The record gives the reactivity of an RNA of 207 nucleotides to DMS and 2A3. The data come from the RNA Mapping Database (RMDB), library OK3TST.
[RMDB]
RNA sequence: GGGAACGACUCGAGUAGAGUCGAAAAGAAAAGGUUUUAUGUCAACUGAGUUGGUAAAUGGCUGCAUCUGCUCCCUUUCUAUGACACUUACAAUGCAUAUUCUCUUAGAAAAGGCACUAAGAAUUCACAAACGAAAUCAACCUAUUGGAUUCAUAGGUCUUGUUUGAGAGUUCGCUCUCAAACAAGAAAAAGAAACAACAACAACAAC
Reactivity to DMS in 0.01 (KOAc 150mM, MgCl2 10mM, bicine 150mM(pH8.5), 24C), signal-to-noise 1, nucleotides 027 to 156: g020a070a120a100a160g010g020u000u000u000u000a050u020g020u010c040a030a070c020u010g000a050g030u000u010g010g040u020a040a080a110u010g030g030c010u000g020c030a130u000c020u010g000c050u000c000c010c010u010u000u000c070u010a110u010g000a170c100a050c070u000u000a150c050a080a030u020g040c040a120u020a090u000u010c030u010c010u000u000a080g000a050a000a050a050g020g020c060a120c060u010a020a070g000a030a050u000u010c010a080c050a020a060a130c070g000a010a090a110u000c050a040a030c030c030u000a070u010u000g010g000a160u010u000c020a050u010a090g020g020
Reactivity to 2A3 in 0.01 (KOAc 150mM, MgCl2 10mM, bicine 150mM(pH8.5), 24C), signal-to-noise 3, nucleotides 027 to 156: g070a010a060a010a020g060g000u050u090u060u100a100u090g050u030c010a020a010c070u120g070a040g130u060u080g060g030u120a040a150a180u080g030g010c030u040g030c030a040u000c020u010g020c030u020c020c000c010u030u030u000c070u050a040u110g030a020c020a000c040u040u080a040c090a060a070u070g000c030a020u030a090u260u060c040u020c000u050u010a030g070a010a160a020a040g070g020c020a000c010u030a070a000g090a050a070u110u100c040a010c060a130a090a030c070g080a030a050a080u100c030a010a080c000c010u020a040u010u090g100g030a040u040u130c030a010u050a020g040g000
Source information: The DMS profile rests on 2,225 reads. Values cover nucleotides 27 to 156.